[RMDB]
RNA sequence: GGGAACGACUCGAGUAGAGUCGAAAAGCGUGGAGAGAGGGCCGCGGUGCUCUGGAGUAGAGGCUCUGCCUUCGAAACACCAUCGAUCGUCCCUUCUUCUUUACCUUAUUCUGGCUCUUCCGAUGAGACGCGACCGGUGGCAUCACCUCUCGGUUCGGCCUAUUCUAGAGUUCGCUCUAGAAUAGGCAAAAGAAACAACAACAACAAC
Reactivity to 2A3 in 0.01 (KOAc 150mM, MgCl2 10mM, bicine 150mM(pH8.5), 24C), signal-to-noise 2, nucleotides 027 to 156: g120c120g000u010g000g000a010g000a000g000a000g010g010g010c010c000g040c000g010g000u000g000c000u000c010u010g000g000a000g010u010a010g000a020g010g000c030u100c230u300g030c010c010u190u250c000g000a010a000a000c010a020c140c000a000u010c010g080a300u030c000g010u000c000c000c000u020u010c010u020u010c000u000u010u000a000c000c000u040u070a300u200u000c110u190g000g000c010u000c000u030u000c000c040g030a110u110g040a040g040a050c030g020c040g040a020c010c000g000g000u030g000g020c080a090u060c030a120c020c000u000c040u070c030g030g000u060u090c050g050
Structure probing data (2A3) for a 207-nucleotide construct.
2A3 adducts were read by reverse transcription with SuperScript II with manganese.
The RNA was probed in 150 mM KOAc, 10 mM MgCl2 and 150 mM bicine (pH 8.5) at 24 C.
It was measured as part of the RMDB library VIROID.